[RMDB]
RNA sequence: GGGAACGACUCGAGUAGAGUCGAAAAAUCUCGGCAAGGAGCUGCUGGAAAAAGUCGAGCUGACGGAGGAUAACGCCAGCAGACUGGAGGAGUUUUCGAAAGAGUGGAAGGAUGCCAGUGAUAAGUGCAAACGUGGAGAUUUCGAUCUCCACGUUUGAAAAGAAACAACAACAACAAC
Reactivity to 2A3 in 0.01 (KOAc 150mM, MgCl2 10mM, bicine 150mM(pH8.5), 24C), signal-to-noise 1, nucleotides 027 to 126: a000u050c010u020c020g010g050c060a040a100g050g000a060g020c040u040g000c010u000g010g080a090a060a000a050a000g000u040c000g030a100g110c050u030g050a010c020g070g010a070g070g000a080u040a200a040c040g040c030c020a000g000c000a000g020a030c050u010g040g000a050g030g000a040g010u060u070u030u040c060g030a080a070a010g100a030g030u100g040g040a040a030g000g000a030u040g040c030c010a040g040u090g070a080u050a190a080g090u080g150
Reactivity to DMS in 0.01 (KOAc 150mM, MgCl2 10mM, bicine 150mM(pH8.5), 24C), signal-to-noise 3, nucleotides 027 to 126: a080u000c020u010c010g020g010c050a140a140g010g020a090g010c040u000g020c020u000g000g000a060a060a080a110a080g010u000c030g000a130g020c050u000g020a060c040g010g010a100g000g010a140u000a050a120c120g000c020c000a020g030c020a140g000a040c040u000g010g000a060g010g010a140g000u000u000u000u010c050g010a060a070a100g020a070g010u010g010g020a070a040g000g000a080u010g010c050c060a050g010u000g010a080u000a050a060g010u010g020
Chemical mapping of a 177-nucleotide RNA with 2A3 and DMS. The RNA was probed in 150 mM KOAc, 10 mM MgCl2 and 150 mM bicine (pH 8.5) at 24 C. For DMS the reverse transcriptase was MarathonRT.